An RNA of 207 nucleotides, treated with 2A3 and read out base by base. Reactivities are given for positions 27 through 156.
[RMDB]
RNA sequence: GGGAACGACUCGAGUAGAGUCGAAAAGUCACCCUCGGGUCGGCGGCCGGCGGCAUCGCGAUCGCCGGACUGUCGGCGCUCGGCGCGUCGAUCGCCGGACUGAAGGUCGGCCUGAUGGGCGUCGGCGACGCGUUCAAGGAGAUGGGCACCUCCGGCGGCAGUUUAUAGAGUUCGCUCUAUAAACUGCAAAAGAAACAACAACAACAAC
Reactivity to 2A3 in 0.01 (KOAc 150mM, MgCl2 10mM, bicine 150mM(pH8.5), 24C), signal-to-noise 2, nucleotides 027 to 156: g030u000c030a050c010c010c030u010c000g020g010g000u010c000g020g010c010g030g020c010c000g000g000c000g020g000c040a070u190c150g020c070g160a130u050c000g000c040c020g060g010a050c010u070g070u080c020g010g000c010g000c010u050c030g120g000c010g000c000g040u060c040g020a070u040c000g000c000c000g030g050a090c050u140g050a080a040g130g000u010c020g050g000c000c020u080g000a120u170g000g000g000c030g000u020c020g010g060c030g030a050c020g000c010g020u060u100c050a070a070g040g020a040g040a080u110g000g020g010c030a040c010c010u000c000c020g020g000c000g070
The reactions ran in a buffer of 150 mM KOAc, 10 mM MgCl2 and 150 mM bicine (pH 8.5), at 24 C. For 2A3, 1,301 sequencing reads were counted.